[RMDB]
RNA sequence: GGGAACGACUCGAGUAGAGUCGAAAAGCGAGAAAUAAGUGAGAAUCUUAUUGGUCGAAAACCUAAGGUUUCCUGAGGAAGGUUCGUCCGCUCAGGGUUAGUCGGGACCUAAGCCGAGGCCGAAAGGCUACUGGGAGAAGUUCGCUUCUCCCAGUAGAAAAGAAACAACAACAACAAC
Reactivity to DMS in 0.01 (KOAc 150mM, MgCl2 10mM, bicine 150mM(pH8.5), 24C), signal-to-noise 6, nucleotides 027 to 126: g000c020g000a050g000a140a040a010u000a010a020g010u000g010a260g000a300a220u010c000u000u000a010u000u000g000g000u000c010g010a060a060a100a120c020c020u000a070a120g010g010u000u000u000c010c010u000g000a020g000g010a110a110g000g000u000u010c190g010u000c000c020g010c010u000c020a030g000g010g010u010u000a050g020u000c040g000g000g000a100c050c050u000a050a070g010c030c020g000a090g010g010c000c000g000a070a090a090g010g010
Reactivity to 2A3 in 0.01 (KOAc 150mM, MgCl2 10mM, bicine 150mM(pH8.5), 24C), signal-to-noise 3, nucleotides 027 to 126: g050c030g010a040g110a030a070a020u050a050a000g010u030g040a090g030a060a060u090c010u020u020a010u030u050g090g080u060c020g040a030a050a050a060c020c010u040a130a110g040g010u020u030u080c010c000u010g020a010g050g060a300a110g040g010u010u080c150g020u040c010c010g100c030u010c000a010g060g000g010u040u050a020g050u030c000g010g030g030a080c010c080u070a030a010g060c000c000g010a030g010g000c000c010g030a070a040a010g040g000
Conditions: 150 mM KOAc, 10 mM MgCl2 and 150 mM bicine (pH 8.5), 24 C.
This 177-nucleotide RNA was probed chemically with DMS and 2A3.
2A3 adducts were read by reverse transcription with SuperScript II with manganese.